[RMDB]
RNA sequence: GGGAACGACUCGAGUAGAGUCGAAAAUCGAGCAGAUGCGAAAGCAGGCCCAAGUGAUCCGGCGGUAGAAAGUGGAAUUGCCGUCGCUCAACGGAUAAAAGGUACCUUAGGGAUAACAGGCUGAUCAGGAUUAACAUUGCUUCGGCAAUGUUAAUCCAAAAGAAACAACAACAACAAC
Reactivity to DMS in 0.01 (KOAc 150mM, MgCl2 10mM, bicine 150mM(pH8.5), 24C), signal-to-noise 1, nucleotides 027 to 126: u030c030g030a170g030c060a030g000a000u070g010c000g000a000a190a110g010c040a000g000g000c000c000c000a170a110g000u000g070a000u000c140c030g010g010c220g000g060u000a100g000a040a050a030g010u040g030g000a090a010u000u020g010c000c000g000u020c090g000c150u000c140a040a150c110g000g000a090u030a030a020a120a020g000g000u000a030c010c050u000u000a150g010g000g000a000u000a090a030c060a000g000g000c000u000g000a000u020c040a180
Reactivity to 2A3 in 0.01 (KOAc 150mM, MgCl2 10mM, bicine 150mM(pH8.5), 24C), signal-to-noise 2, nucleotides 027 to 126: u060c020g010a010g050c010a020g030a110u050g020c000g040a060a010a010g040c030a010g040g030c010c030c000a050a010g070u060g000a010u000c000c010g000g000c000g030g010u060a050g080a080a160a130g110u220g110g130a090a070u050u040g000c000c000g010u000c000g000c000u000c010a020a010c080g020g010a040u100a190a070a030a000g080g010u060a050c000c030u000u070a000g000g020g090a030u010a020a040c020a000g030g000c030u010g000a070u080c030a120